Structure probing data (DMS and 2A3) for a 177-nucleotide construct. The RNA was probed in 150 mM KOAc, 10 mM MgCl2 and 150 mM bicine (pH 8.5) at 24 C.
RNA sequence: GGGAACGACUCGAGUAGAGUCGAAAAGAUAUGGAUCUAGAGAAGGCUUGGAUUUAUGGUGAAACUGUAUGUCGGAAACGACAUACAGGAGUAUGCCAUUGUCAGCCUUCGAUUGGAUCCUAAGUCACACCAAUAUUAUCUUCGGAUAAUAUUGGUGAAAAGAAACAACAACAACAAC
Reactivity to DMS in 0.01 (KOAc 150mM, MgCl2 10mM, bicine 150mM(pH8.5), 24C), signal-to-noise 8, nucleotides 027 to 126: g010a050u000a300u020g010g010a020u000c000u000a030g010a300g010a020a010g010g010c010u010u020g020g010a020u000u010u000a010u000g000g010u000g000a230a190a180c000u000g000u000a000u000g020u000c000g000g000a150a120a270c010g010a010c000a000u000a000c000a010g010g010a060g010u000a070u000g010c000c000a010u000u000g010u000c010a040g000c000c000u000u000c010g000a260u000u010g010g000a010u000c000c000u000a040a100g010u000c040a300
Reactivity to 2A3 in 0.01 (KOAc 150mM, MgCl2 10mM, bicine 150mM(pH8.5), 24C), signal-to-noise 6, nucleotides 027 to 126: g050a010u080a070u220g020g000a010u030c060u100a060g030a000g020a140a010g050g020c130u290u300g270g040a100u300u300u210a020u060g020g000u020g020a020a010a010c000u000g000u010a000u000g000u000c000g000g050a080a120a120c010g000a000c000a000u000a000c000a010g000g000a000g000u000a010u300g000c000c000a000u000u020g000u000c000a000g010c000c000u000u010c000g000a000u000u060g010g000a000u000c010c000u010a240a030g030u030c030a010
It was measured as part of the RMDB library TTRINS.